An RNA of 207 nucleotides, treated with DMS and 2A3 and read out base by base. Conditions: 150 mM KOAc, 10 mM MgCl2 and 150 mM bicine (pH 8.5), 24 C.
RNA sequence: GGGAACGACUCGAGUAGAGUCGAAAAGUGUAAGAUUGAUUGGCAUAAGAUUGAGGAUAAUAUCCAUAUCUUGAAGGACCUAAUAAUUUAUCAAGCCUUCGUAUUUGAUCAGCGGUUGGGAAAUCUACACGCAAUCUACGUGUUCCAGCAUCGUAGAGCAUAGGGCUAGGUUCGCCUAGCCCUAUGCAAAAGAAACAACAACAACAAC
Reactivity to DMS in 0.01 (KOAc 150mM, MgCl2 10mM, bicine 150mM(pH8.5), 24C), signal-to-noise 1, nucleotides 027 to 156: g010u000g000u000a080a130g030a020u000u000g070a040u000u000g040g000c030a130u000a050a130g000a100u000u000g040a110g000g010a010u000a080a190u010a300u000c050c040a000u020a060u040c000u010u000g050a050a050g010g030a010c130c020u010a010a050u000a040a050u000u000u000a020u000c050a020a080g000c010c010u010u000c020g020u000a100u000u000u010g010a050u000c080a160g020c100g000g000u000u000g000g050g000a000a030a090u000c010u000a060c000a040c020g020c090a140a140u000c010u000a000c030g000u000g010u000u000c080c070a070g000c050a170u000c040g020u000a090g000a140
Reactivity to 2A3 in 0.01 (KOAc 150mM, MgCl2 10mM, bicine 150mM(pH8.5), 24C), signal-to-noise 3, nucleotides 027 to 156: g030u020g010u030a100a110g020a050u020u120g030a010u020u090g070g020c050a050u050a140a050g020a090u060u130g060a220g070g020a030u070a120a070u120a170u100c010c010a030u020a040u080c030u050u090g000a020a010g030g010a050c020c020u040a120a070u070a130a110u150u150u160a160u190c030a040a010g010c000c000u020u010c010g030u040a210u060u120u130g080a050u050c000a000g040c020g030g020u040u040g090g030g000a000a030a040u050c020u060a020c030a000c020g020c060a040a060u000c000u000a000c000g010u020g030u060u050c040c040a030g030c000a020u140c010g000u000a000g000a020